[RMDB]
RNA sequence: GGGAACGACUCGAGUAGAGUCGAAAACAUCUAAGCGCGAGAAAUAUACCAGCUCAUUCCUUGCGACUUCUCUCUUUACUAGCCACUUGUACAUGGGGUCAAUUGGUGUUCUUGGAACGAGCAUUCGGCCUGACUCCAUCUUCGGAUGGAGUCAGGCAAAAGAAACAACAACAACAAC
Reactivity to 2A3 in 0.01 (KOAc 150mM, MgCl2 10mM, bicine 150mM(pH8.5), 24C), signal-to-noise 3, nucleotides 027 to 126: c050a090u110c040u180a200a110g100c020g010c040g090a010g160a060a190a000u210a000u000a140c020c040a030g000c000u000c020a040u040u030c020c000u040u020g060c020g090a100c060u280u000c090u000c000u030c000u010u060u040a080c000u010a010g130c070c000a060c030u060u070g130u140a070c010a120u170g050g000g050g000u000c030a050a040u020u100g020g010u060g020u060u030c000u080u060g000g050a060a020c070g000a010g040c000a000u020u110c060g040
The data come from the RNA Mapping Database (RMDB), library OK1LIB. This 177-nucleotide RNA was probed chemically with 2A3. 2A3 adducts were read by reverse transcription with SuperScript II with manganese. The reactions ran in a buffer of 150 mM KOAc, 10 mM MgCl2 and 150 mM bicine (pH 8.5), at 24 C.